[RMDB]
RNA sequence: GGGAACGACUCGAGUAGAGUCGAAAAGAUAUGGAUGAUCGACAUGAUCGAGGAUCGGAAACGAUCCGAGAUCAACAGCGAUAUCCUAAGUCAAAGCAAAUGCGGGUGUUCGCACCCGCAUUUGCAAGCAUGUAGAAACGUUCGCGUUUCUACAUGCAAAAGAAACAACAACAACAAC
Reactivity to DMS in 0.01 (KOAc 150mM, MgCl2 10mM, bicine 150mM(pH8.5), 24C), signal-to-noise 2, nucleotides 027 to 126: g010a050u000a280u000g000g010a010u000g000a020u000c000g030a040c100a240u010g010a020u000c000g000a300g000g000a020u000c000g000g000a090a050a240c000g010a000u000c000c000g000a220g010a010u000c000a010a070c230a090g000c000g010a010u000a030u000c000c010u000a070a160g000u000c030a070a080a110g000c000a010a000a000u000g000c000g010g020g020u020g010u000u030c240g020c000a010c000c010c000g000c020a000u000u010u000g010c000a040a040

The data come from the RNA Mapping Database (RMDB), library TTRDEL. Chemical mapping of a 177-nucleotide RNA with DMS. Reactivities are rounded to 0.1 and cut off at 0 and 3. Conditions: 150 mM KOAc, 10 mM MgCl2 and 150 mM bicine (pH 8.5), 24 C.